Source: RMDB library M2PK50, as collected in RNAgym. Chemical mapping of a 177-nucleotide RNA with DMS and 2A3. The DMS profile rests on 1,801 reads. Reactivities are given for positions 27 through 126. For 2A3, 2,959 sequencing reads were counted. 2A3 adducts were read by reverse transcription with SuperScript II with manganese. The RNA was probed in 150 mM KOAc, 10 mM MgCl2 and 150 mM bicine (pH 8.5) at 24 C.
RNA sequence: GGGAACGACUCGAGUAGAGUCGAAAAGCAGUACGGUUCGCCGUACUGCAAAGGCACAUGCAAAACCGGUGGGAAACGAUAAACGGAAAGCCAAGCAUGAAAAAACAGGGACCUUCGGGUCCCUGAACCUAUUCCAAAGGUUCGCCUUUGGAAUAGGAAAAGAAACAACAACAACAAC
Reactivity to DMS in 0.01 (KOAc 150mM, MgCl2 10mM, bicine 150mM(pH8.5), 24C), signal-to-noise 2, nucleotides 027 to 126: g000c000a010g030u000a020c010g010g010u000u010c240g050c020c000g000u010a010c000u010g010c000a010a020a020g020g010c050a110c040a010u000g000c010a050a060a060a120c040c060g010g000u000g000g000g010a090a130a080c130g030a160u000a040a060a100c050g000g000a050a040a130g020c020c030a050a150g000c020a020u010g000a000a050a050a030a150a150c010a000g000g000g010a000c000c000u010u020c160g020g000g010u000c000c000c000u000g020a030a030
Reactivity to 2A3 in 0.01 (KOAc 150mM, MgCl2 10mM, bicine 150mM(pH8.5), 24C), signal-to-noise 2, nucleotides 027 to 126: g000c000a000g000u010a000c010g010g030u020u140c200g030c080c010g000u000a000c000u000g010c000a050a000a010g010g000c050a030c010a090u030g010c010a000a010a040a200c030c030g000g040u030g020g090g030a070a130a010c030g060a120u180a140a230a040c060g020g000a140a030a000g030c020c020a010a020g000c000a030u040g030a130a110a020a000a000a020c010a000g010g000g000a000c000c000u060u140c210g050g000g010u000c000c010c000u020g000a000a000